[RMDB]
An RNA of 177 nucleotides, treated with 2A3 and DMS and read out base by base.
The data come from the RNA Mapping Database (RMDB), library OK2TST.
The reactions ran in a buffer of 150 mM KOAc, 10 mM MgCl2 and 150 mM bicine (pH 8.5), at 24 C.
RNA sequence: GGGAACGACUCGAGUAGAGUCGAAAAUCACGUACACCAGCGAGCACCCAGAAGGAUUCUAUAACUGGCACCAUGGCGCAGUGCAGUAUAGUGGAGGUAGAUUCACUAUUCCGCGUGGAGUAGGAGGCCAAUACGCAUAUUUCGAUAUGCGUAUUGGAAAAGAAACAACAACAACAAC
Reactivity to 2A3 in 0.01 (KOAc 150mM, MgCl2 10mM, bicine 150mM(pH8.5), 24C), signal-to-noise 7, nucleotides 027 to 126: u050c010a010c040g020u040a030c040a020c040c010a010g030c010g030a020g020c020a040c010c010c010a020g050a060a050g080g030a060u110u000c030u050a100u040a200a160c020u040g100g000c030a010c030c020a060u110g050g000c040g000c040a010g020u010g050c010a010g020u040a020u030a040g050u050g030g020a020g030g040u160a030g040a240u060u040c020a010c060u020a030u040u030c030c010g060c110g100u170g020g010a030g010u040a030g010g060a020g040g000
Reactivity to DMS in 0.01 (KOAc 150mM, MgCl2 10mM, bicine 150mM(pH8.5), 24C), signal-to-noise 9, nucleotides 027 to 126: u010c070a070c090g010u000a090c090a090c040c030a080g020c040g010a090g010c060a100c060c010c030a090g010a120a110g000g010a100u010u000c060u010a060u000a070a070c070u000g000g010c040a040c030c050a060u000g010g010c060g010c090a090g020u010g010c030a040g010u000a040u000a020g020u010g010g000a040g010g020u010a080g000a130u010u000c030a070c010u000a030u000u000c030c020g020c180g010u000g010g010a050g010u000a050g000g010a100g010g000
DMS adducts were read by reverse transcription with MarathonRT.